[RMDB]
RNA sequence: GGGAACGACUCGAGUAGAGUCGAAAAGAUAUGGAUAUCCUAGGGAGGUUGAGUUCGGAAACGAACUCAAGACCUUUGAUCUAGUGAUAUCCUAAGUCAAAACAUGUCCGUCUUCGGACGGACAUGACGACAUUAAAUGGUUCGCCAUUUAAUGUCGAAAAGAAACAACAACAACAAC
Reactivity to DMS in 0.01 (KOAc 150mM, MgCl2 10mM, bicine 150mM(pH8.5), 24C), signal-to-noise 3, nucleotides 027 to 126: g000a010u000a010u020g000g000a010u010a000u000c000c000u000a010g000g000g010a000g040g010u000u000g000a010g000u000u000c000g000g000a010a000a020c010g020a010a010c000u000c010a020a070g000a050c010c000u000u000u010g010a010u000c000u000a010g000u020g010a020u000a010u000c000c000u000a000a060g000u000c010a160a110a140a280c020a000u000g000u000c000c000g010u010c000u000u020c280g010g010a020c000g010g000a020c000a000u000g000a140
Reactivity to 2A3 in 0.01 (KOAc 150mM, MgCl2 10mM, bicine 150mM(pH8.5), 24C), signal-to-noise 3, nucleotides 027 to 126: g000a000u010a010u050g000g010a010u000a000u010c000c000u000a010g030g020g000a010g000g010u030u030g010a010g000u000u000c010g010g000a010a010a000c000g010a000a000c000u000c010a000a010g120a030c000c000u190u300u030g010a000u000c000u000a010g020u050g060a000u000a000u000c000c000u000a000a000g010u000c000a000a040a050a180c010a010u000g000u000c010c010g010u000c020u040u100c300g200g000a000c000g000g000a000c000a000u000g010a020

An RNA of 177 nucleotides, treated with DMS and 2A3 and read out base by base. It was measured as part of the RMDB library TTRDES. The reactions ran in a buffer of 150 mM KOAc, 10 mM MgCl2 and 150 mM bicine (pH 8.5), at 24 C. The 2A3 profile rests on 16,823 reads.